[RMDB]
RNA sequence: GGGAACGACUCGAGUAGAGUCGAAAAGAAAGAAACAGUUGGCUAGCAGAACGCACGAGGCUUAAAGCCAACCGUGCGAGUCGGAAGGCACGACCGACAAGAAAAGCCCUACAAUCGUGCAAGAAAAGACGUAUACUACUUUCGAGUAGUAUACGUCAAAAGAAACAACAACAACAAC
Reactivity to DMS in 0.01 (KOAc 150mM, MgCl2 10mM, bicine 150mM(pH8.5), 24C), signal-to-noise 5, nucleotides 027 to 126: g000a060a050a100g000a080a060a050c100a080g040u010u030g010g000c000u010a100g020c100a150g000a060a180c040g000c030a050c030g010a100g010g020c010u010u060a090a160a080g010c010c000a030a070c150c030g010u000g030c020g000a140g010u000c000g000g000a060a040g010g010c010a000c000g000a040c000c000g020a000c010a100a110g010a050a060a060a130g000c020c000c040u020a070c200a120a050u000c050g040u000g000c000a170a130g020a060a060a090a060
Reactivity to 2A3 in 0.01 (KOAc 150mM, MgCl2 10mM, bicine 150mM(pH8.5), 24C), signal-to-noise 8, nucleotides 027 to 126: g040a000a040a000g120a020a090a010c110a060g060u120u060g070g010c020u030a030g050c040a030g060a260a040c020g010c030a000c040g030a060g050g020c070u190u240a170a050a000g000c000c000a010a010c030c000g010u010g020c010g010a010g010u010c000g000g020a040a050g080g000c000a000c000g010a010c010c000g010a010c020a040a030g120a050a070a020a000g020c000c000c020u070a050c070a040a060u100c010g000u010g000c000a020a000g090a020a050a000a010
Conditions: 150 mM KOAc, 10 mM MgCl2 and 150 mM bicine (pH 8.5), 24 C. This 177-nucleotide RNA was probed chemically with DMS and 2A3. 2A3 adducts were read by reverse transcription with SuperScript II with manganese. DMS adducts were read by reverse transcription with MarathonRT. Reactivities are given for positions 27 through 126. Source: RMDB library OK1LIB, as collected in RNAgym.